[RMDB]
RNA sequence: GGGAACGACUCGAGUAGAGUCGAAAACAUAAGGUCGGAGGUCGAAGAAGGGAGAUCCAUCCAGUGGGAAGGCAGGUGAGCCUCUAAAGGCAGGUAUUGGGCUCAAACACACUUAAUAAGCAGCUAGAGUACCUAUAAGUGCGUGGGACGCAACUGCACUUAUCUUCGCAUUCGUGCGAAGAUAAGUAAAAGAAACAACAACAACAAC
Reactivity to DMS in 0.01 (KOAc 150mM, MgCl2 10mM, bicine 150mM(pH8.5), 24C), signal-to-noise 1, nucleotides 027 to 156: c060a160u020a090a090g040g020u020c030g020g000a100g000g040u000c080g020a070a090g000a060a050g000g010g000a130g000a080u010c050c030a120u000c020c020a100g010u000g030g010g020a070a050g030g010c000a040g020g070u000g020a110g010c000c020u000c070u000a060a050a050g000g050c020a040g060g000u000a050u000u020g010g040g010c010u000c010a050a030a000c080a050c060a040c030u000u000a040a140u010a090a090g030c000a020g010c030u010a150g020a130g010u010a030c020c020u000a040u020a040a040g060u000g050c020g010u000g000g020g000a060c060g060c050a040a080c030u000g030c140
Reactivity to 2A3 in 0.01 (KOAc 150mM, MgCl2 10mM, bicine 150mM(pH8.5), 24C), signal-to-noise 4, nucleotides 027 to 156: c030a050u140a090a030g040g020u050c040g050g030a020g010g050u070c050g040a070a050g040a050a040g060g030g000a040g010a020u040c020c010a040u030c020c010a030g080u120g040g000g010a070a050g020g010c030a010g000g040u080g030a020g010c010c020u050c030u100a070a090a050g050g000c010a020g010g030u060a050u090u090g050g020g000c000u010c030a030a100a000c070a020c000a000c020u060u090a070a020u090a240a020g020c050a000g000c010u070a020g010a030g100u100a170c000c010u090a070u020a180a050g040u050g030c030g030u070g000g020g010a000c030g000c030a030a080c030u060g010c030
An RNA of 207 nucleotides, treated with DMS and 2A3 and read out base by base. The data come from the RNA Mapping Database (RMDB), library OK3TST. The reactions ran in a buffer of 150 mM KOAc, 10 mM MgCl2 and 150 mM bicine (pH 8.5), at 24 C. For DMS the reverse transcriptase was MarathonRT.